Conditions: 150 mM KOAc, 10 mM MgCl2 and 150 mM bicine (pH 8.5), 24 C. Chemical mapping of a 177-nucleotide RNA with DMS. Reactivities are given for positions 27 through 126.
RNA sequence: GGGAACGACUCGAGUAGAGUCGAAAAGGAGGAACAGGAGAGAGAGGCAGAAAAGGACAGGCUGAAGAAUGCCUCGCUCAGCACUGCAGGAGAUACUGUAGAGUUCUGGGGGAGGAAGGAAUCCCAAAAUCAUCAUGACCUUCGGGUCAUGAUGAUUAAAAGAAACAACAACAACAAC
Reactivity to DMS in 0.01 (KOAc 150mM, MgCl2 10mM, bicine 150mM(pH8.5), 24C), signal-to-noise 1, nucleotides 027 to 126: g030g000a030g020g020a080a060c090a110g000g000a050g000a080g020a140g000a060g010g010c070a020g000a040a070a130a070g000g010a070c150a070g010g040c020u000g020a070a060g000a140a080u000g010c000c020u010c000g030c010u000c000a050g020c210a130c080u040g000c040a020g000g040a170g010a150u020a060c010u000g000u000a030g010a110g000u030u010c010u000g000g000g000g000g000a040g000g010a050a060g000g000a130a130u010c000c000c010a080a080
The DMS profile rests on 950 reads.